[RMDB]
RNA sequence: GGGAACGACUCGAGUAGAGUCGAAAAUAGUCAAAGCAUAGCGAGGAGCCCUCAUGACCAAAUGGACUGCCGCCGACAUUCCUGACCAGACCGGCCGGACCGCCGUCAUCACGGGGGCCAACACCGGACAUAGAACGACAUUCGUGUCGUUCUAUGUAAAAGAAACAACAACAACAAC
Reactivity to 2A3 in 0.01 (KOAc 150mM, MgCl2 10mM, bicine 150mM(pH8.5), 24C), signal-to-noise 4, nucleotides 027 to 126: u170a030g100u090c050a050a080a030g030c050a080u150a040g060c030g040a050g050g030a030g020c000c000c010u030c040a070u040g020a070c010c040a070a040a100u090g040g020a010c030u050g020c010c010g020c000c010g010a030c020a060u070u080c000c010u050g050a080c030c010a030g040a080c020c010g020g020c020c010g040g040a090c000c020g080c030c000g060u040c020a030u080c020a020c040g010g000g000g030g000c010c000a020a010c020a010c010c000g010g000
Reactivity to DMS in 0.01 (KOAc 150mM, MgCl2 10mM, bicine 150mM(pH8.5), 24C), signal-to-noise 4, nucleotides 027 to 126: u040a070g020u020c070a080a110a060g020c080a080u020a060g020c050g020a130g010g010a160g010c020c000c020u000c050a060u010g000a080c040c050a050a140a070u010g000g010a080c050u010g010c070c040g010c020c030g000a110c070a080u010u010c010c000u000g000a090c120c110a110g000a080c050c020g000g010c120c050g000g000a050c040c070g010c010c030g000u000c170a100u050c130a070c070g000g000g000g000g000c020c030a030a050c190a130c040c020g000g000